Structure probing data (2A3 and DMS) for a 177-nucleotide construct. The DMS profile rests on 1,427 reads. For DMS the reverse transcriptase was MarathonRT. The data come from the RNA Mapping Database (RMDB), library OK2TST. The reactions ran in a buffer of 150 mM KOAc, 10 mM MgCl2 and 150 mM bicine (pH 8.5), at 24 C.
RNA sequence: GGGAACGACUCGAGUAGAGUCGAAAAUGCGACAAUUCUGUAUCCGUUUGCUGGCACAAUCCUCUUAUCAGCUUGUCGAAGUGCAAGCCUCUCUGGAAGAGUCGUUGCAGGCAGAUGAGAUGGUUAACAUUAUGACGCCGUUCGCGGCGUCAUAAUGAAAAGAAACAACAACAACAAC
Reactivity to 2A3 in 0.01 (KOAc 150mM, MgCl2 10mM, bicine 150mM(pH8.5), 24C), signal-to-noise 1, nucleotides 027 to 126: u070g000c000g060a030c030a050a160u090u040c060u160g150u080a060u000c000c000g000u020u010u010g000c030u090g020g000c020a020c010a040a070u050c020c040u120c000u050u070a130u210c040a010g010c000u000u030g000u000c040g230a300a060g050u110g110c000a030a000g020c030c000u050c000u000c040u090g070g060a020a010g010a010g010u030c050g130u060u010g000c020a000g040g000c000a000g010a040u030g010a160g000a140u040g000g080u110u070a060a000
Reactivity to DMS in 0.01 (KOAc 150mM, MgCl2 10mM, bicine 150mM(pH8.5), 24C), signal-to-noise 2, nucleotides 027 to 126: u000g010c160g010a090c100a110a080u020u000c050u010g040u020a070u000c070c010g020u010u000u000g000c000u040g010g060c030a030c070a080a120u020c180c020u010c030u000u010a090u010c050a120g000c020u000u000g010u000c050g010a110a130g030u030g000c000a020a000g020c280c140u000c140u000c120u010g000g010a060a090g000a030g000u010c150g030u000u000g010c010a090g000g000c030a000g020a000u000g010a080g000a030u000g000g010u010u000a100a130